[RMDB]
RNA sequence: GGGAACGACUCGAGUAGAGUCGAAAAUCAUUGGCGAUCGUUGCAUUCUUGCGAAUAAUGCAACAUUGGGUGGUCAUGUAGAAAUCGACGAUUUUGCCAUUAUUGGUGGAAUGACUGCUAUCCAUCAGGUGUGACUUGGAUUCGUCCAAGUCACACCAAAAGAAACAACAACAACAAC
Reactivity to 2A3 in 0.01 (KOAc 150mM, MgCl2 10mM, bicine 150mM(pH8.5), 24C), signal-to-noise 2, nucleotides 027 to 126: u100c030a060u000u100g050g030c020g020a010u010c070g010u000u000g000c000a000u000u040c060u120u210g030c080g060a190a100u140a160a010u050g010c000a000a000c000a010u020u070g070g000g000u000g010g000u040c010a020u030g020u020a050g090a110a100a060u040c060g040a050c060g010a070u000u070u020u210g000c000c010a030u080u120a220u140u050g040g000u000g040g000a060a030u050g010a000c040u020g000c020u070a050u040c000c030a010u060c040a020
Reactivity to DMS in 0.01 (KOAc 150mM, MgCl2 10mM, bicine 150mM(pH8.5), 24C), signal-to-noise 1, nucleotides 027 to 126: u000c060a130u000u000g010g040c000g000a040u000c160g010u000u000g020c060a010u000u000c090u000u020g000c180g010a160a060u000a020a020u000g010c000a030a040c020a050u000u020g000g070g020u000g000g000u010c000a040u010g040u000a100g010a020a040a080u000c030g000a100c150g000a080u000u000u030u010g010c010c000a030u000u000a200u010u000g000g060u000g000g000a140a020u010g010a080c020u000g010c040u000a140u000c000c030a040u010c080a110
The record gives the reactivity of an RNA of 177 nucleotides to 2A3 and DMS. The 2A3 profile rests on 1,294 reads. For DMS, 1,024 sequencing reads were counted. As a SHAPE reagent, 2A3 marks flexible, mostly unpaired nucleotides at the ribose 2'-OH.